[RMDB]
RNA sequence: GGGAACGACUCGAGUAGAGUCGAAAACUCAGUCACACUGACAGACUGUCUGAGUCUGACAGAGUGAGUGACACUCACUCUGUCACACAGUGAGUGUGACACAGUCACUCUGACUCUCAGUCUGACAUCGAGUCGUAUUGUUCGCAAUACGACUCGAAAAAGAAACAACAACAACAAC
Reactivity to DMS in 0.01 (KOAc 150mM, MgCl2 10mM, bicine 150mM(pH8.5), 24C), signal-to-noise 3, nucleotides 027 to 126: c040u010c030a090g000u000c090a040c130a290c090u000g010a130c050a040g000a070c020u000g000u010c110u000g010a010g000u000c010u010g000a030c010a030g030a030g020u000g000a000g000u010g000a170c100a300c000u000c010a010c020u000c000u000g000u010c000a020c140a060c220a040g020u000g000a080g000u000g020u020g000a050c000a260c080a130g020u010c000a030c020u000c030u000g010a060c020u010c040u020c010a020g000u000c030u000g010a070c090a130
Reactivity to 2A3 in 0.01 (KOAc 150mM, MgCl2 10mM, bicine 150mM(pH8.5), 24C), signal-to-noise 3, nucleotides 027 to 126: c010u030c030a020g150u110c030a020c010a040c150u080g050a030c010a020g010a010c020u030g050u110c130u060g040a010g030u000c020u060g000a000c010a010g000a010g020u010g000a020g020u170g160a040c080a040c120u000c000a010c000u020c010u020g010u010c020a000c000a010c010a020g160u130g060a040g030u070g000u040g040a000c070a020c020a110g030u000c000a000c030u020c020u060g000a020c000u000c000u020c010a020g010u000c010u060g020a030c010a080
Overview: The record gives the reactivity of an RNA of 177 nucleotides to DMS and 2A3. Reactivities are given for positions 27 through 126. It was measured as part of the RMDB library OK2TRN. 2A3 adducts were read by reverse transcription with SuperScript II with manganese. Conditions: 150 mM KOAc, 10 mM MgCl2 and 150 mM bicine (pH 8.5), 24 C. For 2A3, 3,214 sequencing reads were counted. DMS adducts were read by reverse transcription with MarathonRT.